This 177-nucleotide RNA was probed chemically with DMS.
[RMDB]
RNA sequence: GGGAACGACUCGAGUAGAGUCGAAAAGAUAUGGAGAUCGAGAGCUUGGAUUUAUGCAUUAGGCUAUGUGGGUCGGAAACGACCCACUAAGGCCUAAUGCAUUGUCAGCUCGAGAUCUCCUAAGUCAUCCAAUAUGGCUGUUCGCAGCCAUAUUGGAAAAAGAAACAACAACAACAAC
Reactivity to DMS in 0.01 (KOAc 150mM, MgCl2 10mM, bicine 150mM(pH8.5), 24C), signal-to-noise 1, nucleotides 027 to 126: g000a050u000a300u000g000g010a050g020a000u000c020g050a300g000a000g040c000u010u000g030g030a020u000u010u000a020u020g000c000a000u000u000a010g000g000c010u000a300u010g000u000g060g010g030u000c000g000g000a130a180a220c000g000a000c000c000c030a000c000u000a040a160g000g000c000c000u000a000a000u000g030c000a000u000u000g000u000c010a020g000c000u000c020g000a300g030a000u000c000u000c000c000u000a020a020g010u000c010a200